[RMDB]
RNA sequence: GGGAACGACUCGAGUAGAGUCGAAAAGCGUUAUCCUGGAACUUUGGCGAUGGGGCCGGGAGGGCCAAGCGUAUCAUCGAUCUGUCGGUCGGUAUGGUAAGUGACGCAAGCUGUAUGGUAAGUGACGGCUAUUUGCUCGAUUCGUCGAGCAAAUAGCAAAAGAAACAACAACAACAAC
Reactivity to 2A3 in 0.01 (KOAc 150mM, MgCl2 10mM, bicine 150mM(pH8.5), 24C), signal-to-noise 1, nucleotides 027 to 126: g060c080g020u120u040a070u160c030c010u060g020g060a000a080c070u080u100u040g060g000c010g050a050u080g050g000g000g090c070c030g000g130g000a010g010g000g000c000c000a020a000g060c000g020u040a010u030c000a010u070c040g030a000u030c000u030g190u290c150g030g060u040c000g020g010u130a050u010g050g040u000a020a000g000u000g050a000c050g030c040a030a000g000c080u040g000u070a110u140g040g000u030a070a040g020u020g030a000c030g000
Reactivity to DMS in 0.01 (KOAc 150mM, MgCl2 10mM, bicine 150mM(pH8.5), 24C), signal-to-noise 2, nucleotides 027 to 126: g000c070g030u000u000a070u010c000c020u000g000g000a080a090c020u010u000u010g000g020c040g000a170u030g020g000g000g000c030c020g020g020g020a110g050g000g010c000c060a030a160g010c040g010u000a050u000c070a030u020c060g000a070u000c060u020g000u000c100g030g020u000c040g000g020u000a010u000g000g010u020a000a080g050u000g010a050c040g000c020a030a140g010c000u020g010u040a080u000g020g020u010a090a150g000u000g010a050c110g060